[RMDB]
RNA sequence: GGGAACGACUCGAGUAGAGUCGAAAAGCGCGGGCCACUGGCCGCAGGAACUGACCACGUGGUUAAGGAGCAUGGGCGUAAAGACGGGCUCCGAGCGCGCCCCGGAGCCGUCCAUGUAAAUCAGUAGCAGACGGGUGAAGUUCGCUUCACCCGUCUGAAAAGAAACAACAACAACAAC
Reactivity to DMS in 0.01 (KOAc 150mM, MgCl2 10mM, bicine 150mM(pH8.5), 24C), signal-to-noise 1, nucleotides 027 to 126: g010c020g000c020g000g000g000c000c000a110c090u000g020g040c040c000g010c060a030g030g020a230a100c230u030g010a100c040c050a060c100g030u000g010g040u000u030a050a070g000g000a130g000c000a040u000g000g000g020c000g000u000a060a230a050g000a090c220g060g010g000c000u000c000c030g000a230g070c010g000c120g050c000c030c010c020g020g000a030g040c030c000g000u050c010c010a030u000g000u000a070a050a090u000c040a060g000u100a090g000
Reactivity to 2A3 in 0.01 (KOAc 150mM, MgCl2 10mM, bicine 150mM(pH8.5), 24C), signal-to-noise 1, nucleotides 027 to 126: g000c000g000c000g000g100g020c030c000a070c060u110g010g020c080c000g000c000a000g000g210a030a080c150u070g070a080c020c040a010c120g070u120g010g000u020u100a040a040g030g010a010g010c000a040u030g000g000g000c010g030u120a140a070a000g040a060c120g090g060g000c000u000c000c000g000a010g000c000g010c000g070c050c030c000c000g000g000a040g000c010c000g000u000c000c000a080u110g100u150a000a080a040u190c030a020g010u070a000g090
The record gives the reactivity of an RNA of 177 nucleotides to DMS and 2A3. Reactivities are rounded to 0.1 and cut off at 0 and 3. It was measured as part of the RMDB library OK1LIB. Reactivities are given for positions 27 through 126. For DMS, 1,448 sequencing reads were counted.